[RMDB]
RNA sequence: GGGAACGACUCGAGUAGAGUCGAAAACGGCACAGACGAUACGGGACGAUCGCCGCGUCGGAUCUGAAGUCGGGCAAGUCCGAUCCGGACUACAUCGGCAAGGUCGAGAUUCAGGUCGCGUGUUACGAUGAUUCUUAGCCUUCGGGCUAAGAAUCAUAAAAGAAACAACAACAACAAC
Reactivity to DMS in 0.01 (KOAc 150mM, MgCl2 10mM, bicine 150mM(pH8.5), 24C), signal-to-noise 2, nucleotides 027 to 126: c080g010g010c030a040c050a140g020a210c040g000a080u000a030c040g010g000g010a130c110g010a070u000c120g000c030c030g040c110g000u000c030g020g030a070u010c010u000g000a050a040g010u010c010g030g010g010c040a180a130g000u010c000c000g000a070u000c170c130g030g000a060c090u010a050c180a060u000c030g020g010c040a150a100g010g010u000c020g020a040g010a120u000u000c020a040g000g000u000c030g000c130g010u000g010u010u010a100c090g000
Reactivity to 2A3 in 0.01 (KOAc 150mM, MgCl2 10mM, bicine 150mM(pH8.5), 24C), signal-to-noise 1, nucleotides 027 to 126: c000g010g030c010a000c000a040g140a050c030g020a020u140a100c000g030g010g080a000c130g070a080u030c010g010c040c030g000c000g020u030c070g000g000a010u000c030u000g050a000a000g060u030c040g000g000g010c070a120a010g030u030c000c000g000a070u030c010c130g000g080a050c050u040a060c090a070u060c010g010g000c020a060a130g090g240u020c010g000a010g020a050u090u030c020a030g010g030u000c020g000c070g030u060g010u100u020a100c070g020

Annotation:
The data come from the RNA Mapping Database (RMDB), library OK2TRN. Structure probing data (DMS and 2A3) for a 177-nucleotide construct. For DMS the reverse transcriptase was MarathonRT. The RNA was probed in 150 mM KOAc, 10 mM MgCl2 and 150 mM bicine (pH 8.5) at 24 C. For DMS, 1,594 sequencing reads were counted.